[RMDB]
Record summary
This 177-nucleotide RNA was probed chemically with DMS and 2A3. For DMS the reverse transcriptase was MarathonRT. It was measured as part of the RMDB library OK2TRN. The RNA was probed in 150 mM KOAc, 10 mM MgCl2 and 150 mM bicine (pH 8.5) at 24 C.
RNA sequence: GGGAACGACUCGAGUAGAGUCGAAAAACACGAUAGAUAUGAAUUACUGGGAUGAUGAGGACAUCAUACAUGCAAUAUCAAUAUGCACUGCCUCAACAAUUGCGGAUACUAUGUCUCAACUUGAUAGAGUAGUGGACCAAUUCGUUGGUCCACUACUAAAAGAAACAACAACAACAAC
Reactivity to DMS in 0.01 (KOAc 150mM, MgCl2 10mM, bicine 150mM(pH8.5), 24C), signal-to-noise 2, nucleotides 027 to 126: a070c040a120c240g000a120u000a110g050a050u000a030u010g000a120a080u000u000a080c020u000g000g010g010a050u000g010a110u010g010a140g000g010a130c020a030u000c090a080u000a040c090a080u000g000c040a010a040u010a160u010c070a070a070u000a030u010g000c050a050c120u000g000c000c050u010c150a020a070c210a070a050u000u000g000c000g000g000a050u010a040c070u000a060u000g030u000c010u000c100a060a110c230u000u000g000a070u000a080g000
Reactivity to 2A3 in 0.01 (KOAc 150mM, MgCl2 10mM, bicine 150mM(pH8.5), 24C), signal-to-noise 2, nucleotides 027 to 126: a000c050a000c030g130a080u070a150g040a010u070a040u050g080a090a090u130u090a120c050u060g100g040g050a010u030g020a030u030g000a040g070g030a040c010a020u270c010a010u110a050c080a010u140g050c020a010a120u080a030u230c020a060a030u080a020u050g000c000a020c070u030g030c010c010u030c000a040a030c030a040a030u080u060g020c000g010g010a030u040a120c050u050a050u180g040u000c010u000c040a060a220c100u110u010g020a060u170a160g230